[RMDB]
RNA sequence: GGGAACGACUCGAGUAGAGUCGAAAAUACUUUGUAGGUGUAGCAGUCGCCCAGUGGGAAAGCGUCAGUGUUUGUGUGGUUGAGUGGGGAACAAAUUAGGGAAAUUAAAUUGGCUUAAAUGGGGGAGCCAAUAUCUGGAAUUCGUUCCAGAUAUUGGAAAAGAAACAACAACAACAAC
Reactivity to 2A3 in 0.01 (KOAc 150mM, MgCl2 10mM, bicine 150mM(pH8.5), 24C), signal-to-noise 9, nucleotides 027 to 126: u090a020c050u080u070u130g080u100a030g040g020u030g020u070a020g050c030a030g010u050c020g040c000c010c020a030g040u120g010g030g000a060a100a030g030c020g020u010c050a080g010u000g070u070u110u040g060u040g010u030g020g070u090u100g020a040g030u070g020g000g010g010a010a040c040a040a100a060u150u120a070g010g000g040a010a010a020u060u080a050a050a080u090u060g060g010c020u080u140a040a080a130u140g030g000g000g010g010a010g000
Reactivity to DMS in 0.01 (KOAc 150mM, MgCl2 10mM, bicine 150mM(pH8.5), 24C), signal-to-noise 9, nucleotides 027 to 126: u020a080c070u000u010u010g020u010a070g000g000u010g010u010a070g010c080a070g020u010c080g010c030c020c020a080g020u020g000g000g010a080a060a070g010c060g020u010c040a060g020u020g000u010u010u010g020u000g020u010g000g000u010u010g000a090g020u010g000g000g000g000a080a070c130a030a040a090u020u010a080g000g010g010a070a060a090u030u030a020a050a130u010u000g000g000c040u010u010a040a050a100u010g000g000g000g000g010a110g010

Description: The data come from the RNA Mapping Database (RMDB), libraries RFM100 and RFMREP. This 177-nucleotide RNA was probed chemically with 2A3 and DMS. 2A3 adducts were read by reverse transcription with SuperScript II with manganese. Reactivities are given for positions 27 through 126.